[RMDB]
RNA sequence: GGGAACGACUCGAGUAGAGUCGAAAAGAUGCUUGUCGAUUUCGAAUAUGCGUCGACAAAUGAUCGGGCGGCCGAACUCGCGCUUUGGUUCUGUGAAAUGUGCUUCUCGCCCGAGGUCGAGAAGGAGCUGAUUUAGGGAUUUCGAUCCCUAAAUCAGAAAAGAAACAACAACAACAAC
Reactivity to DMS in 0.01 (KOAc 150mM, MgCl2 10mM, bicine 150mM(pH8.5), 24C), signal-to-noise 4, nucleotides 027 to 126: g000a030u010g020c100u000u010g010u010c000g000a060u000u010u060c080g020a100a110u040a110u020g020c300g000u000c000g010a020c020a010a050a060u020g010a050u010c020g000g000g020c000g010g020c080c010g000a190a060c030u010c050g000c060g030c130u000u000u000g010g010u020u010c020u000g000u000g000a050a130a080u010g010u010g000c010u000u010c000u000c000g000c020c010c110g000a060g000g020u010c000g000a030g000a040a020g000g010a130g020
Reactivity to 2A3 in 0.01 (KOAc 150mM, MgCl2 10mM, bicine 150mM(pH8.5), 24C), signal-to-noise 7, nucleotides 027 to 126: g030a000u080g050c040u020u010g020u010c000g040a060u080u150u070c060g060a140a090u260a130u300g080c030g020u000c000g020a000c010a000a060a040u210g070a060u030c000g010g050g020c020g030g000c000c010g010a040a030c030u020c040g060c020g010c080u100u040u150g090g000u070u010c050u070g100u030g080a090a110a140u190g030u100g040c010u010u000c010u010c020g030c020c030c030g050a060g000g020u100c030g000a010g000a050a010g020g040a040g010